[RMDB]
RNA sequence: GGGAACGACUCGAGUAGAGUCGAAAAGAUAUGGAUGACUCAACAGCAUACGGCGUCGGAAACGACGUUAUGACAUGAGUUGUCCUAAGUCAAAACACUACAUGUCGGUUCGCCGACAUGUAGUGAACUCCUCGAAUAGGUUCGCCUAUUCGAGGAGAAAAGAAACAACAACAACAAC
Reactivity to 2A3 in 0.01 (KOAc 150mM, MgCl2 10mM, bicine 150mM(pH8.5), 24C), signal-to-noise 2, nucleotides 027 to 126: g000a000u050a010u120g010g000a000u030g020a010c000u000c000a000a150c080a190g160c010a030u070a130c180g150g000c010g040u000c020g060g040a090a080a030c010g020a010c000g000u000u040a070u020g040a090c040a110u070g010a010g000u000u020g030u000c000c000u030a100a010g050u030c020a020a000a090a120c020a000c020u010a000c010a000u010g000u010c000g060g060u080u110c300g030c070c000g000a010c000a000u010g000u000a010g000u000g010a000a010
Reactivity to DMS in 0.01 (KOAc 150mM, MgCl2 10mM, bicine 150mM(pH8.5), 24C), signal-to-noise 2, nucleotides 027 to 126: g030a020u000a300u000g000g020a030u020g000a000c000u000c020a030a080c260a250g030c030a020u000a110c300g000g000c000g020u000c010g000g010a150a050a170c010g010a000c000g000u000u000a040u000g000a060c100a120u010g000a000g040u000u000g000u000c000c000u010a020a040g030u000c020a060a070a140a230c030a000c000u000a010c000a000u000g000u000c000g000g000u010u030c300g030c030c030g030a000c000a000u000g000u010a000g000u000g000a060a160